RNA sequence: GGGAACGACUCGAGUAGAGUCGAAAAACGCCGACGAGCAACUGGGCCACAUUGCCCGUGAGAUGGGCUUUGCCGAGCAGCUGUCAGCGGUGAUCAACCGCCUUGGUCGGUGACCGCAAACGCAGCACAUAGCCGCAGUGUUCGCACUGCGGCUAUGAAAAGAAACAACAACAACAAC
Reactivity to 2A3 in 0.01 (KOAc 150mM, MgCl2 10mM, bicine 150mM(pH8.5), 24C), signal-to-noise 1, nucleotides 027 to 126: a000c060g010c010c010g010a030c020g000a010g050c030a030a060c060u120g010g000g000c050c010a090c000a100u130u180g000c010c010c020g000u060g040a180g040a090u200g040g010g030c010u040u050u060g070c050c030g010a030g000c030a040g090c000u020g050u160c100a000g010c020g000g000u000g060a160u120c030a010a030c000c000g100c150c070u210u250g090g010u030c010g000g000u050g090a000c000c000g000c050a080a100a030c080g010c010a010g080c020a000
Reactivity to DMS in 0.01 (KOAc 150mM, MgCl2 10mM, bicine 150mM(pH8.5), 24C), signal-to-noise 2, nucleotides 027 to 126: a160c090g000c040c020g010a130c080g020a110g010c040a060a100c070u010g010g010g030c000c260a060c150a040u000u040g000c010c030c000g030u000g020a150g020a140u010g030g000g010c020u020u010u000g020c020c060g010a080g050c060a090g030c050u000g000u000c160a250g010c010g020g000u000g000a110u000c100a050a030c010c010g040c150c130u000u000g010g020u000c010g000g060u010g010a170c010c030g020c070a020a050a160c300g010c020a030g000c090a230
Annotation: This 177-nucleotide RNA was probed chemically with 2A3 and DMS. The DMS profile rests on 798 reads. Source: RMDB library OK2TST, as collected in RNAgym. For DMS the reverse transcriptase was MarathonRT. 2A3 adducts were read by reverse transcription with SuperScript II with manganese. Conditions: 150 mM KOAc, 10 mM MgCl2 and 150 mM bicine (pH 8.5), 24 C. As a SHAPE reagent, 2A3 marks flexible, mostly unpaired nucleotides at the ribose 2'-OH.